[RMDB]
RNA sequence: GGGAACGACUCGAGUAGAGUCGAAAAAUGCACCCGCAUCACCUGACUUCCACCAGUACCCUGGACAGCAGGACACUGACCAUCAGGGAGGGGUGAGCAGAGCUACCUAAUAGGAGGGCUAACUCCAAAUUAGGUAAUGUUUCGACAUUACCUAAUUAAAAGAAACAACAACAACAAC
Reactivity to DMS in 0.01 (KOAc 150mM, MgCl2 10mM, bicine 150mM(pH8.5), 24C), signal-to-noise 9, nucleotides 027 to 126: a080u010g010c050a100c090c040c060g010c040a160u000c030a050c010c000u000g010a180c040u000u000c020c030a190c180c010a020g010u000a080c040c010c000u000g000g000a150c300a150g010c010a020g010g000a060c060a020c020u000g000a070c140c150a110u010c130a100g000g000g010a030g020g000g000g010u000g010a040g000c030a070g000a160g010c020u000a090c010c010u000a070a090u010a110g000g000a050g010g000g020c160u010a060a120c020u000c010c020a080
Reactivity to 2A3 in 0.01 (KOAc 150mM, MgCl2 10mM, bicine 150mM(pH8.5), 24C), signal-to-noise 9, nucleotides 027 to 126: a010u120g010c040a070c010c040c040g000c020a300u020c010a010c010c000u070g150a150c010u040u010c010c010a040c010c000a020g020u050a070c010c000c020u050g120g190a300c110a130g230c000a000g040g020a010c030a000c060u050g030a050c020c040a150u170c110a130g000g000g020a010g000g010g000g000u010g010a010g000c010a010g000a010g000c020u080a100c010c000u090a170a120u090a210g020g010a020g010g050g040c050u060a080a070c010u010c020c010a030